Chemical mapping of a 177-nucleotide RNA with 2A3 and DMS. As a SHAPE reagent, 2A3 marks flexible, mostly unpaired nucleotides at the ribose 2'-OH. Conditions: 150 mM KOAc, 10 mM MgCl2 and 150 mM bicine (pH 8.5), 24 C.
RNA sequence: GGGAACGACUCGAGUAGAGUCGAAAAGGCGAGGUCUUCGGACCUCGCCAAAUGACCGCCAUUAUUGGCUAAGGGUACACGGACGGCCGGGUCAAAUGCCGAAAACUUCCGCCUUCGGGCGGAAGAACUAGAGUAUCUAGUUCGCUAGAUACUCUAGAAAAGAAACAACAACAACAAC
Reactivity to 2A3 in 0.01 (KOAc 150mM, MgCl2 10mM, bicine 150mM(pH8.5), 24C), signal-to-noise 4, nucleotides 027 to 126: g010g030c010g030a000g060g010u040c060u160u200c300g080g020a000c010c000u000c010g010c000c000a010a000a000u010g000a000c010c000g060c020c010a110u150u170a150u250u300g000g010c020u050a120a130g170g000g000u070a070c110a030c100g050g100a020c010g040g000c020c000g040g000g000u040c000a000a040a050u100g020c000c010g000a030a030a060a070c000u020u000c000c010g020c000c030u060u080c230g060g000g000c000g020g000a000a010g000a000a010
Reactivity to DMS in 0.01 (KOAc 150mM, MgCl2 10mM, bicine 150mM(pH8.5), 24C), signal-to-noise 2, nucleotides 027 to 126: g010g030c000g020a010g020g040u000c000u000u020c180g010g010a010c000c000u010c010g000c000c000a000a020a110u000g010a030c030c020g010c010c010a070u000u000a120u010u000g020g030c000u020a060a090g010g010g000u000a050c080a080c040g010g000a080c040g000g000c000c020g000g030g010u010c020a080a040a070u000g000c010c010g010a100a040a090a120c010u000u000c000c000g020c000c000u000u010c180g020g010g010c000g000g000a010a000g010a040a080